[RMDB]
An RNA of 177 nucleotides, treated with DMS and 2A3 and read out base by base. For 2A3, 3,182 sequencing reads were counted. High 2A3 reactivity points to a flexible backbone, as in loops and unpaired stretches. The DMS profile rests on 3,758 reads. The reactions ran in a buffer of 150 mM KOAc, 10 mM MgCl2 and 150 mM bicine (pH 8.5), at 24 C. Reactivities are given for positions 27 through 126.

RNA sequence: GGGAACGACUCGAGUAGAGUCGAAAAUGUGGUGGUCAAUGGCAAAGUUUCUACACUUGUCAAACAAGUGUUAGACUUGCUUAAUAAGGGUAUGCAACUUUUGCAUACAAAGGUCUCCUGGGCUGGUGUUAUGAAAUUGGUUCGCCAAUUUCAUAACAAAAGAAACAACAACAACAAC
Reactivity to DMS in 0.01 (KOAc 150mM, MgCl2 10mM, bicine 150mM(pH8.5), 24C), signal-to-noise 4, nucleotides 027 to 126: u020g020u000g010g020u000g010g000u010c070a120a070u000g020g010c000a030a040a080g010u010u000u010c050u000a000c000a020c000u000u000g010u010c290a100a080a300c000a000a000g010u000g010u010u010a040g000a060c050u000u000g010c020u000u000a110a080u010a070a070g020g000g000u000a000u000g010c000a030a150c290u000u000u000u000g020c000a010u010a030c020a040a070a090g000g010u000c030u010c040c020u000g010g010g020c070u000g000g000u000
Reactivity to 2A3 in 0.01 (KOAc 150mM, MgCl2 10mM, bicine 150mM(pH8.5), 24C), signal-to-noise 2, nucleotides 027 to 126: u120g010u010g000g030u010g010g020u010c030a070a080u080g040g010c010a010a010a150g010u080u080u060c020u020a010c000a000c000u020u040g020u110c060a100a080a080c000a030a000g000u010g000u010u030a000g000a010c000u000u010g000c010u040u050a050a030u130a110a080g080g000g020u010a010u020g000c010a060a060c060u100u240u260u050g000c000a010u020a020c020a030a030a000g030g000u000c020u020c050c010u040g070g000g000c020u020g020g060u040